Conditions: 150 mM KOAc, 10 mM MgCl2 and 150 mM bicine (pH 8.5), 24 C.
An RNA of 207 nucleotides, treated with DMS and 2A3 and read out base by base.
The DMS profile rests on 5,887 reads.
For 2A3, 10,409 sequencing reads were counted.
It was measured as part of the RMDB library PDB130.
For 2A3 the reverse transcriptase was SuperScript II with manganese.
RNA sequence: GGGAACGACUCGAGUAGAGUCGAAAAUCGUUCAUGGGAGAGUCUAUCCAGACUUGCGUAGCGAGUAAUCGCUAGGUGAGAAGCUCUGGAGACAAUGUACCUGCCCUUCAAUUGGAGGUGCCAGGGCUAGGCUUUGUUCCUAUGGCUAGCGAAAGCGCCACUAUUUAAACUUCGGUUUAAAUAGUGGAAAAGAAACAACAACAACAAC
Reactivity to DMS in 0.01 (KOAc 150mM, MgCl2 10mM, bicine 150mM(pH8.5), 24C), signal-to-noise 2, nucleotides 027 to 156: u000c020g000u030u000c040a080u000g000g020g010a080g000a050g030u000c020u000a170u030c000c000a030g020a300c010u000u000g010c020g020u010a000g000c010g000a050g000u000a160a140u010c000g030c000u000a010g000g080u000g000a050g000a140a120g010c240u010c010u010g000g000a050g000a070c050a060a130u000g010u000a070c020c010u000g000c010c010c010u000u010c030a280a210u000u010g010g000a050g010g010u010g000c070c020a030g010g020g000c030u000a050g020g010c020u000u000u000g020u000u000c000c000u020a040u000g010g000c100u000a020g000c040g020a090a120a170g000c070g010
Reactivity to 2A3 in 0.01 (KOAc 150mM, MgCl2 10mM, bicine 150mM(pH8.5), 24C), signal-to-noise 9, nucleotides 027 to 156: u050c010g020u060u060c000a000u010g020g000g000a020g010a000g000u010c000u020a020u000c010c000a000g020a020c000u020u040g020c170g160u000a000g000c010g000a010g050u200a120a210u020c000g000c010u000a010g030g070u020g000a110g060a090a030g050c070u000c000u020g000g000a000g000a010c020a010a030u050g010u120a300c010c000u000g000c000c010c000u010u010c130a300a300u190u300g000g000a000g010g000u050g100c160c010a000g000g010g010c010u010a000g010g000c000u030u050u140g140u180u050c000c000u000a010u000g020g020c070u060a030g010c010g040a070a070a020g070c050g010